RNA sequence: GGGAACGACUCGAGUAGAGUCGAAAAUUGAGGCCGCCAUUGAGAAGUACACAGGGAAGAAGGUCGGGGGCGGCGCUUCCUCCUCUUCCUCCUCUGCCUCUGCAGCAGGAGGGUCCGAUGACAUCUCGAGAGUUUAUAUUUUCGAAUAUAAACUCUCAAAAGAAACAACAACAACAAC
Reactivity to 2A3 in 0.01 (KOAc 150mM, MgCl2 10mM, bicine 150mM(pH8.5), 24C), signal-to-noise 3, nucleotides 027 to 126: u070u050g020a060g070g000c000c000g000c030c020a050u080u150g080a070g010a200a030g090u130a070c140a030c060a100g030g020g060a050a130g040a080a030g110g020u080c030g030g000g010g010g020c000g000g000c010g000c010u030u010c000c000u020c010c000u050c010u100u050c020c010u000c000c010u010c000u000g010c020c050u200c190u300g000c010a020g000c010a000g000g000a000g000g000g000u030c020c030g020a020u080g040a010c010a110u020c050u030c070
Reactivity to DMS in 0.01 (KOAc 150mM, MgCl2 10mM, bicine 150mM(pH8.5), 24C), signal-to-noise 5, nucleotides 027 to 126: u010u000g010a090g010g030c040c020g020c020c020a160u000u010g000a150g000a080a100g020u010a060c170a130c150a140g010g000g000a120a100g010a110a080g000g000u000c080g010g000g000g010g000c020g010g010c040g010c080u000u000c010c010u000c070c010u000c050u020u010c010c000u010c010c010u010c010u000g010c000c220u010c260u010g000c020a010g020c140a030g010g010a010g000g010g010u010c030c040g000a070u000g000a090c100a060u010c070u000c080

Source information: This 177-nucleotide RNA was probed chemically with 2A3 and DMS. Source: RMDB library OK2TRN, as collected in RNAgym. 2A3 adducts were read by reverse transcription with SuperScript II with manganese.